[RMDB]
RNA sequence: GGGAACGACUCGAGUAGAGUCGAAAAGCAUACGUUACAUAAUCUGCGUUCGUAUGCGGUAGGCAACGCAGAUUAUGUAAGCCUACCACCGUACGGUGGACAUGCGAAAGCAUGUCCAUCGUACGGAGCACCAAGAACCCUUCGGGGUUCUUGGUGCAAAAGAAACAACAACAACAAC
Reactivity to 2A3 in 0.01 (KOAc 150mM, MgCl2 10mM, bicine 150mM(pH8.5), 24C), signal-to-noise 1, nucleotides 027 to 126: g030c010a070u130a130c140g140u040u000a000c010a000u000a000a000u000c020u020g010c000g030u000u040c080g030u100a100u230g040c080g010g110u130a050g040g000c050a020a000c000g000c000a000g000a000u000u000a000u000g000u000a000a000g000c010c000u030a040c000c020a080c000c000g000u000a000c000g000g000u000g000g010a000c000a000u000g010c000g030a100a010a000g000c000a000u000g000u000c000c000a020u000c000g000u000a000c000g000g000a000
Chemical mapping of a 177-nucleotide RNA with 2A3. Source: RMDB library OK1LIB, as collected in RNAgym. The reactions ran in a buffer of 150 mM KOAc, 10 mM MgCl2 and 150 mM bicine (pH 8.5), at 24 C.